[RMDB]
RNA sequence: GGGAACGACUCGAGUAGAGUCGAAAAAGUUUUGCCUGUUAGGUGAGGCUCCUAUGCAAACACAGGCCACUGCCCAAAAAUGUCCAUAGACGCCAAUGGGUAGAACAGGGAUUGUCGGAUUAAGGCUAAAACAGCCCAUGCUUCGGCAUGGGCUGAACAAAUUCUAAGUGUUCGCACUUAGAAUUUGAAAAGAAACAACAACAACAAC
Reactivity to 2A3 in 0.01 (KOAc 150mM, MgCl2 10mM, bicine 150mM(pH8.5), 24C), signal-to-noise 1, nucleotides 027 to 156: a000g000u080u000u070u040g040c040c010u080g080u130u110a030g000g040u060g060a040g040g000c010u040c020c040u160a130u150g060c050a060a140a050c020a010c010a110g020g010c040c000a010c020u010g000c040c000c000a040a000a010a000a000u020g010u000c010c010a180u050a270g020a040c010g010c000c010a000a050u020g040g000g010u020a020g000a020a010c020a040g060g000g000a040u080u000g050u090c030g040g000a060u130u140a080a000g020g000c010u020a040a040a040a040c000a000g040c000c000c010a010u000g020c010u050u110c210g090g010c000a000u020g090g000g000c000u000g000a010a000
Reactivity to DMS in 0.01 (KOAc 150mM, MgCl2 10mM, bicine 150mM(pH8.5), 24C), signal-to-noise 1, nucleotides 027 to 156: a060g020u000u000u000u000g040c020c030u000g040u010u000a120g020g000u000g000a050g000g000c000u010c020c050u000a110u010g040c120a070a050a130c070a040c020a040g000g020c010c070a080c030u000g020c000c000c000a000a050a100a070a110u010g000u000c040c080a120u020a170g000a070c010g040c010c030a080a150u000g010g000g010u000a020g000a060a070c040a070g020g010g000a090u000u000g000u010c040g050g000a140u000u010a050a060g000g020c040u000a060a040a140a260c040a030g080c010c000c000a060u010g000c020u000u010c300g060g000c000a020u000g050g010g000c000u000g000a010a060
An RNA of 207 nucleotides, treated with 2A3 and DMS and read out base by base. Conditions: 150 mM KOAc, 10 mM MgCl2 and 150 mM bicine (pH 8.5), 24 C. It was measured as part of the RMDB library M2RFPK. For DMS the reverse transcriptase was MarathonRT. For 2A3, 634 sequencing reads were counted.